Structure probing data (2A3) for a 207-nucleotide construct. The RNA was probed in 150 mM KOAc, 10 mM MgCl2 and 150 mM bicine (pH 8.5) at 24 C. For 2A3 the reverse transcriptase was SuperScript II with manganese. Values cover nucleotides 27 to 156. The 2A3 profile rests on 667 reads. It was measured as part of the RMDB library OK3TST.
[RMDB]
RNA sequence: GGGAACGACUCGAGUAGAGUCGAAAACACCGACGUGGUGCCGGAACGCGGCGCCGAGGGCGUCGAGCGGGUGCGCGAGCUGACCGGCGGGCACGGCGCCCCGCACGUGCUGGAGUGCGUCGGCACGGACGACUCGCUGGCCACCGCCGUGGGCGUGGCUGCCCUCCUUAUUCGUAAGGAGGGCAGCAAAAGAAACAACAACAACAAC
Reactivity to 2A3 in 0.01 (KOAc 150mM, MgCl2 10mM, bicine 150mM(pH8.5), 24C), signal-to-noise 1, nucleotides 027 to 156: c030a000c000c020g050a020c000g050u030g010g160u170g120c000c020g040g090a190a100c080g010c020g140g010c000g000c000c010g000a160g080g100g010c000g000u010c050g020a030g010c030g010g000g000u140g080c000g000c030g020a070g000c060u100g060a200c010c000g020g050c170g050g010g020c050a040c030g020g020c030g000c000c000c090c020g000c010a070c000g040u070g000c060u040g020g040a100g060u190g070c000g000u040c000g000g030c000a070c070g010g030a010c010g020a020c020u000c020g010c040u030g030g060c000c050a080c000c030g060c000c050g070u160g040g040g000c010g010u080g040